[RMDB]
The record gives the reactivity of an RNA of 207 nucleotides to DMS and 2A3. The RNA was probed in 150 mM KOAc, 10 mM MgCl2 and 150 mM bicine (pH 8.5) at 24 C. DMS adducts were read by reverse transcription with MarathonRT. Source: RMDB library RNAMAK, as collected in RNAgym.
RNA sequence: GGGAACGACUCGAGUAGAGUCGAAAAGGGGUCUAGUCUCUAGCGUGGUCCGAGGAUCUUUAGCUAGGUCUGAAGCCUCCACGGACCUUGGACCUAAAGGGAGGACUCGGGCUAGACGGAGGCACCCAAAACAGAGGGGUGGUUCGCCACCCCUCUGGUAAAGUAGAUUCUUCGGAAUCUACUUUACAAAAGAAACAACAACAACAAC
Reactivity to DMS in 0.01 (KOAc 150mM, MgCl2 10mM, bicine 150mM(pH8.5), 24C), signal-to-noise 1, nucleotides 027 to 156: g010g010g020g000u000c030u000a060g020u000c010u000c140u030a160g020c150g000u010g000g000u000c000c000g010a160g010g000a060u000c000u000u000u010a060g010c030u010a020g060g040u000c000u000g030a110a080g010c000c000u000c020c090a300c050g000g000a000c010c010u010u000g020g010a020c270c010u000a030a030a070g010g000g010a050g010g010a060c020u010c020g020g010g020c010u000a040g000a060c040g000g000a040g040g020c020a090c010c010c010a090a050a110a230c060a030g020a030g000g020g020g020u010g000g040u000u000c100g020c030c000a010c000c000c000c000u000c000u020g000
Reactivity to 2A3 in 0.01 (KOAc 150mM, MgCl2 10mM, bicine 150mM(pH8.5), 24C), signal-to-noise 3, nucleotides 027 to 156: g050g010g020g000u000c020u010a010g010u010c060u030c090u240a120g100c100g250u300g030g000u010c010c000g020a300g000g010a020u000c010u000u010u010a020g010c030u020a010g010g000u020c000u000g020a060a010g000c000c000u000c020c010a050c070g000g010a010c080c010u100u300g010g000a010c000c000u000a000a000a020g010g000g000a010g000g000a000c010u020c100g020g000g000c000u000a020g000a010c040g000g000a000g000g020c000a030c000c000c000a040a100a010a010c010a000g000a000g000g020g020g000u000g000g030u080u110c190g060c040c000a000c050c010c010c000u000c000u010g000